[RMDB]
RNA sequence: GGGAACGACUCGAGUAGAGUCGAAAAUGCGGCUAGAGCGUGAUUGACGGCUACGAUCGUCCUCGGACGCAUCCAGUGCUGUAGAGGAUCGUUACUCGGCUCGGUUUCUACCUUGCCGGGGUGGUCGUUCGAAGGUUACUUUCGAGUAACCUUCGAAAAAAGAAACAACAACAACAAC
Reactivity to 2A3 in 0.01 (KOAc 150mM, MgCl2 10mM, bicine 150mM(pH8.5), 24C), signal-to-noise 5, nucleotides 027 to 126: u090g020c010g010g000c050u070a050g020a030g100c030g050u080g060a140u020u100g030a010c000g020g010c010u070a050c050g060a080u030c020g020u010c000c000u020c040g080g240a010c010g000c010a000u040c080c040a080g040u040g050c030u090g040u090a020g000a020g060g040a020u040c010g040u080u080a100c000u010c000g010g000c000u000c020g000g020u060u240u010c050u050a030c000c000u000u020g020c010c010g000g010g000g010u010g010g000u000c000g010
Reactivity to DMS in 0.01 (KOAc 150mM, MgCl2 10mM, bicine 150mM(pH8.5), 24C), signal-to-noise 4, nucleotides 027 to 126: u020g020c020g000g010c050u020a050g000a100g010c090g000u010g010a170u010u020g010a100c000g010g000c020u000a080c160g020a060u000c020g020u000c030c000u020c090g000g000a060c140g000c040a040u020c090c120a150g000u010g020c000u030g000u030a100g000a040g000g000a050u010c030g010u020u000a190c010u000c010g000g020c010u010c110g010g010u000u030u030c250u020a040c000c020u010u000g030c000c000g000g010g000g030u020g000g010u010c010g010